[RMDB]
RNA sequence: GGGAACGACUCGAGUAGAGUCGAAAACCCAUCACUUCGGUGAUGGGCCGCCGUCCUAAGUCUGAGCCGUUUGACGGGGAGUCGGAUGUCGGAAACGACAUUCGACGAAGAACCCGAGGCUCAGAUAUGGAAUAAAGCCACGUCUUCGGACGUGGAAGUAUGCAACAGAGUUCGCUCUGUUGCAUACAAAAGAAACAACAACAACAAC
Reactivity to DMS in 0.01 (KOAc 150mM, MgCl2 10mM, bicine 150mM(pH8.5), 24C), signal-to-noise 1, nucleotides 027 to 156: c000c000c000a010u000c000a000c020u000u000c290g000g020u000g020a000u000g000g020g000c030c030g010c110c020g000u000c010c000u000a110a290g000u010c000u020g030a040g010c000c010g070u010u000u000g000a140c050g100g000g000g000a300g030u000c010g040g000a030u000g000u000c010g000g000a210a190a220c030g000a030c000a010u000u000c000g020a010c000g020a050a060g010a150a150c000c000c030g000a200g020g050c000u000c000a000g020a020u000a090u010g010g020a120a080u000a120a080a160g000c020c000a000c000g010u000c010u000u000c300g070g000a010c020g030u000g000g010a000a000
Reactivity to 2A3 in 0.01 (KOAc 150mM, MgCl2 10mM, bicine 150mM(pH8.5), 24C), signal-to-noise 4, nucleotides 027 to 156: c000c000c000a000u010c000a000c000u070u120c270g130g000u000g000a000u010g000g000g000c010c020g080c050c030g060u030c020c010u070a170a090g010u010c000u010g000a010g000c020c030g180u130u300u300g210a120c020g000g020g010g010a080g000u000c000g010g000a000u000g000u010c000g040g020a160a050a040c010g000a000c000a000u010u000c020g000a000c000g000a040a000g020a030a030c000c000c000g020a040g010g010c000u020c000a000g000a000u000a010u020g000g040a010a100u170a160a160a020g040c000c000a000c000g020u000c010u050u140c300g120g000a000c000g010u000g000g000a000a000

Structure probing data (DMS and 2A3) for a 207-nucleotide construct. For 2A3, 3,193 sequencing reads were counted. Reactivities are given for positions 27 through 156. The data come from the RNA Mapping Database (RMDB), library RNAMAK. For DMS, 1,891 sequencing reads were counted. DMS adducts were read by reverse transcription with MarathonRT. The RNA was probed in 150 mM KOAc, 10 mM MgCl2 and 150 mM bicine (pH 8.5) at 24 C.